[RMDB]
RNA sequence: GGGAACGACUCGAGUAGAGUCGAAAAUUUAAAGAUAGAAACCAACCUGGCUUACACCGGUUUGAACUCAGAUCAUGUAAGAAUUUAAAAGUCGAACAGACUUAAAAUUUGAACGGCUACACCCAAAGUAGACACAAGAUUUCGAUCUUGUGUCUACAAAAGAAACAACAACAACAAC
Reactivity to DMS in 0.01 (KOAc 150mM, MgCl2 10mM, bicine 150mM(pH8.5), 24C), signal-to-noise 1, nucleotides 027 to 126: u000u000u090a140a120a080g000a150u010a050g000a100a150a220c030c080a020a070c030c090u000g000g000c000u000u000a050c250a100c100c060g000g020u000u000u000g000a130a140c100u030c040a040g000a050u010c030a040u000g000u040a010a110g000a000a080u000u000u000a020a160a050a000g000u000c000g050a050a120c110a180g000a000c000u000u000a060a000a030a220u000u000u010g030a140a030c000g000g030c030u000a030c160a150c000c000c000a100a070a130
Reactivity to 2A3 in 0.01 (KOAc 150mM, MgCl2 10mM, bicine 150mM(pH8.5), 24C), signal-to-noise 3, nucleotides 027 to 126: u080u070u060a060a040a000g070a010u170a030g080a050a060a010c000c020a000a030c000c050u070g030g000c020u070u060a020c020a010c020c020g000g000u020u010u030g020a080a060c020u010c130a050g060a140u030c010a000u050g010u120a020a020g000a010a040u020u020u110a130a220a040a000g000u000c000g040a160a040c100a120g020a010c000u020u040a080a060a000a030u030u020u050g010a020a010c040g030g010c000u000a020c020a080c010c030c000a000a070a040

An RNA of 177 nucleotides, treated with DMS and 2A3 and read out base by base. Conditions: 150 mM KOAc, 10 mM MgCl2 and 150 mM bicine (pH 8.5), 24 C. For 2A3, 1,867 sequencing reads were counted. 2A3 is a SHAPE reagent: it acylates the 2'-hydroxyl of flexible nucleotides of all four kinds. For DMS the reverse transcriptase was MarathonRT.